[RMDB]
RNA sequence: GGGAACGACUCGAGUAGAGUCGAAAAGGUGCGAGUGCACGAACAGCUCGAAAGUGCACAAGAGCUGGAUUUCUUUCUUUACGAGCGAGCAGAAAGGCGAACUGCAAAGCCGAGCUCGGAAGCGCCAGGGCUCCGGUUUCUUCGGGGGCCGGGGCCCAAAAGAAACAACAACAACAAC
Reactivity to 2A3 in 0.01 (KOAc 150mM, MgCl2 10mM, bicine 150mM(pH8.5), 24C), signal-to-noise 9, nucleotides 027 to 126: g060g000u050g020c040g040a070g040u060g020c010a000c010g020a110a020c030a020g030c030u050c070g060a160a070a020g040u050g020c020a010c030a040a020g040a010g020c040u070g050g020a080u040u100u020c020u020u080u000c020u030u130u130a110c030g010a020g040c010g010a020g020c020a010g130a160a140a020g100g020c060g050a110a070c090u120g050c120a090a020a010g000c010c020g020a010g000c000u010c000g010g010a020a020g010c020g010c030c020a050
Reactivity to DMS in 0.01 (KOAc 150mM, MgCl2 10mM, bicine 150mM(pH8.5), 24C), signal-to-noise 7, nucleotides 027 to 126: g010g020u000g020c010g010a160g030u000g000c000a020c010g010a090a150c100a120g000c060u020c060g000a080a090a210g010u000g000c010a010c010a130a100g000a050g000c050u010g000g000a130u010u000u020c050u010u000u010c010u000u010u010a110c020g010a040g010c010g010a200g000c040a090g000a070a100a110g010g020c040g010a070a110c120u010g000c110a060a090a160g000c030c010g010a050g010c000u000c010g000g000a040a090g010c060g000c020c010a090